[RMDB]
RNA sequence: GGGAACGACUCGAGUAGAGUCGAAAACGCAAGCCACCGGUGCGCGCUAGCUCGCGCGCCGCCAGCUCCGCGGUGGCCAUGAUGCCGUCCGCCGAGUUCAACCCCGCAUAGGUUCGGAUCGGCUCGACGUAGGUAUGCGAUUCGUCGCAUACCUACGAAAAGAAACAACAACAACAAC
Reactivity to DMS in 0.01 (KOAc 150mM, MgCl2 10mM, bicine 150mM(pH8.5), 24C), signal-to-noise 3, nucleotides 027 to 126: c090g030c090a140a070g000c020c010a080c260c020g020g000u000g000c010g010c040g030c040u010a120g000c200u010c060g000c030g000c010g000c010c050g020c120c100a120g020c010u000c070c140g030c040g000g020u010g000g020c010c110a110u020g000a100u000g030c030c000g000u000c010c020g020c010c050g010a050g020u000u000c060a090a200c020c010c030c050g000c120a130u010a140g010g000u020u000c090g020g010a050u000c040g010g000c010u000c040g000a190
Reactivity to 2A3 in 0.01 (KOAc 150mM, MgCl2 10mM, bicine 150mM(pH8.5), 24C), signal-to-noise 2, nucleotides 027 to 126: c040g000c070a040a010g000c000c010a000c020c030g000g030u030g010c020g010c010g030c100u110a070g030c070u030c020g000c000g020c010g020c010c000g000c000c000a000g010c000u010c040c040g000c010g040g020u010g020g000c010c030a300u300g070a080u170g020c000c030g030u050c020c010g000c010c030g050a030g010u140u020c040a070a110c000c020c000c000g060c040a130u180a160g040g000u050u150c080g040g040a070u110c030g000g010c000u000c020g040a030
Chemical mapping of a 177-nucleotide RNA with DMS and 2A3. Conditions: 150 mM KOAc, 10 mM MgCl2 and 150 mM bicine (pH 8.5), 24 C. DMS adducts were read by reverse transcription with MarathonRT. The data come from the RNA Mapping Database (RMDB), library OK2TRN. Values cover nucleotides 27 to 126. For 2A3, 2,688 sequencing reads were counted.